[RMDB]
RNA sequence: GGGAACGACUCGAGUAGAGUCGAAAAGAUCUGAUGCAGUGUCGUCUGGCAGGUGUCACCUUGAAGCGGUGGGCUGUGUGUGGAAGUACUUGCACGAUGAGUACGCUGCACCAGAUGAUCAGGCAUGGGCUGAAUCAAGGUUCGCCUUGGUUUAGCCAAAAGAAACAACAACAACAAC
Reactivity to 2A3 in 0.01 (KOAc 150mM, MgCl2 10mM, bicine 150mM(pH8.5), 24C), signal-to-noise 1, nucleotides 027 to 126: g080a040u020c000u020g020a010u000g010c000a010g020u020g020u040c010g020u000c000u080g060g000c000a020g000g000u000g080u020c010a020c010c000u000u300g300a170a000g000c020g050g010u120g010g220g000c000u000g040u000g010u000g000u000g020g070a090a010g030u030a010c010u000u000g000c010a010c010g060a050u070g000a000g010u000a010c010g000c010u010g000c000a000c000c000a000g000a000u000g000a050u070c040a010g050g000c020a020u080g050
An RNA of 177 nucleotides, treated with 2A3 and read out base by base. Values are in units of 0.01, from 0 to 300, in steps of 10. For 2A3 the reverse transcriptase was SuperScript II with manganese. Conditions: 150 mM KOAc, 10 mM MgCl2 and 150 mM bicine (pH 8.5), 24 C.